[RMDB]
RNA sequence: GGGAACGACUCGAGUAGAGUCGAAAAGAUACCAGUUGAUCAAAUAACCGGUAUUACUCCAGAUAAGUUUGCCGUUGAUCUCUCCGGUCGCUUCUAGUGCUUGCACAACCGGAACCAGCGCCUGGCAACUCCCUAAAUGAUUCGUCAUUUAGGGAGUAAAAGAAACAACAACAACAAC
Reactivity to DMS in 0.01 (KOAc 150mM, MgCl2 10mM, bicine 150mM(pH8.5), 24C), signal-to-noise 7, nucleotides 027 to 126: g000a040u000a010c010c010a040g010u000u000g000a120u010c240a110a160a140u010a040a020c060c020g010g010u000a010u000u000a090c080u000c030c030a150g000a150u010a060a080g010u010u000u000g010c060c010g020u000u000g010a080u000c080u010c130u000c010c010g010g010u000c110g010c120u000u010c130u010a110g010u000g010c050u000u010g010c060a050c060a140a050c020c000g000g000a040a080c100c040a030g000c040g010c080c020u010g010g000c110a070
Reactivity to 2A3 in 0.01 (KOAc 150mM, MgCl2 10mM, bicine 150mM(pH8.5), 24C), signal-to-noise 5, nucleotides 027 to 126: g030a000u030a020c000c010a010g010u030u050g080a150u130c130a090a080a200u170a130a050c010c010g000g010u000a030u020u050a060c030u010c010c030a030g030a290u190a110a040g060u020u110u100g030c020c010g030u030u060g080a100u000c050u010c010u010c090c010g000g050u060c060g010c160u160u060c030u140a070g050u040g100c040u080u100g020c040a010c010a100a030c010c000g020g000a010a000c020c010a000g010c020g020c030c020u040g000g000c010a010

Background: This 177-nucleotide RNA was probed chemically with DMS and 2A3. For 2A3 the reverse transcriptase was SuperScript II with manganese. It was measured as part of the RMDB library OK2TST. Conditions: 150 mM KOAc, 10 mM MgCl2 and 150 mM bicine (pH 8.5), 24 C. The 2A3 profile rests on 5,298 reads.